[RMDB]
RNA sequence: GGGAACGACUCGAGUAGAGUCGAAAAGGGAUAUUGUUCGCAAUAUCCCAAAAGGAACCAGGCACGGUGCCUGAGAUCUGAAUAGCUAAUACGGAAGCUAAAAAACCACGGAGUUCGCUCCGUGGAAGAUGUUUGAAAGGUUCGCCUUUCAAACAUCAAAAGAAACAACAACAACAAC
Reactivity to 2A3 in 0.01 (KOAc 150mM, MgCl2 10mM, bicine 150mM(pH8.5), 24C), signal-to-noise 3, nucleotides 027 to 126: g010g000g000a010u000a000u000u020g010u020u070c120g020c090a000a000u000a000u010c020c000c000a020a010a000a020g020g000a040a030c010c010a000g000g000c050a040c270g290g100u230g030c000c000u040g030a120g000a100u020c020u010g020a100a010u010a050g000c010u050a010a080u140a220c110g170g040a080a020g040c030u110a140a130a020a030a040a050c000c000a000c010g020g010a000g030u050u070c130g070c070u000c000c000g000u000g000g000a000a010
Reactivity to DMS in 0.01 (KOAc 150mM, MgCl2 10mM, bicine 150mM(pH8.5), 24C), signal-to-noise 2, nucleotides 027 to 126: g000g000g000a000u000a010u000u000g010u000u020c240g020c000a020a020u000a000u000c000c000c000a010a010a080a150g010g010a050a140c030c000a020g000g010c020a180c280g010g010u000g000c010c000u010g010a070g030a030u010c030u000g000a110a120u000a030g000c020u000a040a090u000a120c190g010g000a110a040g000c020u000a000a060a070a060a080a080c010c000a000c000g000g000a000g020u000u010c250g010c010u000c000c000g020u000g000g010a030a030
Conditions: 150 mM KOAc, 10 mM MgCl2 and 150 mM bicine (pH 8.5), 24 C. An RNA of 177 nucleotides, treated with 2A3 and DMS and read out base by base. For DMS, 1,860 sequencing reads were counted. For 2A3 the reverse transcriptase was SuperScript II with manganese. DMS adducts were read by reverse transcription with MarathonRT. The data come from the RNA Mapping Database (RMDB), library M2PK50.